[RMDB]
RNA sequence: GGGAACGACUCGAGUAGAGUCGAAAAGGAAUGCCUGACGGUCACUGUUGCCUUUGGGAUUUCAGGCGUGCAGGUCACGCGUAUUCUGGACAGCAUUGCGCUGUUUCGCGGCUAUCCGGCGACGAUAACGGGAUGAAACCUUCGGGUUUCAUCCCGUAAAAGAAACAACAACAACAAC
Reactivity to DMS in 0.01 (KOAc 150mM, MgCl2 10mM, bicine 150mM(pH8.5), 24C), signal-to-noise 1, nucleotides 027 to 126: g000g000a030a150u010g020c000c000u000g020a080c070g010g010u000c090a160c100u000g010u010u000g020c000c020u000u000u000g030g010g010a010u010u000u000c070a130g010g020c030g010u000g030c110a100g010g000u000c010a110c080g000c010g010u000a040u000u000c050u010g030g010a020c010a040g010c010a200u010u010g010c220g000c080u000g020u000u030u010c100g020c050g000g000c010u000a170u000c010c040g000g010c080g040a100c040g000a040u020a110
This 177-nucleotide RNA was probed chemically with DMS. The data come from the RNA Mapping Database (RMDB), library OK2TRN. Conditions: 150 mM KOAc, 10 mM MgCl2 and 150 mM bicine (pH 8.5), 24 C.